Structure probing data (DMS and 2A3) for a 177-nucleotide construct. It was measured as part of the RMDB library OK2TRN.

[RMDB]
RNA sequence: GGGAACGACUCGAGUAGAGUCGAAAAAGCUGGGACUACAGGCACGCACCAUCACAUCUGGCUAAUUUUUGUAUAUUUAGUAGAGACGAGGUUUCACAAUGUUGGCCAGGCUGGUCUCAAACUCCUGUACGAACUUGAAUUUCGAUUCAAGUUCGUAAAAAGAAACAACAACAACAAC
Reactivity to DMS in 0.01 (KOAc 150mM, MgCl2 10mM, bicine 150mM(pH8.5), 24C), signal-to-noise 4, nucleotides 027 to 126: a120g020c070u000g020g000g020a060c030u000a060c090a080g010g010c070a070c100g010c080a050c020c040a070u010c070a060c130a110u000c010u010g010g020c010u010a010a010u000u000u000u010u000g000u010a070u010a040u010u000u000a130g010u000a090g010a070g000a060c140g010a120g020g010u000u000u000c070a040c080a040a050u000g010u000u000g010g030c010c010a030g010g000c140u000g020g000u000c040u000c040a040a070a080c100u000c010c020u000g020
Reactivity to 2A3 in 0.01 (KOAc 150mM, MgCl2 10mM, bicine 150mM(pH8.5), 24C), signal-to-noise 2, nucleotides 027 to 126: a010g050c040u040g000g000g050a010c010u060a050c080a050g020g040c040a010c110g010c010a070c010c000a080u050c050a020c020a080u040c010u020g030g000c000u020a010a110u070u270u090u100u080g060u020a070u010a030u150u090u040a060g000u020a020g020a010g000a130c050g050a060g120g000u030u060u080c040a030c000a050a030u050g010u040u020g020g000c000c000a000g030g000c000u030g000g030u000c020u010c000a070a080a080c050u020c010c020u050g050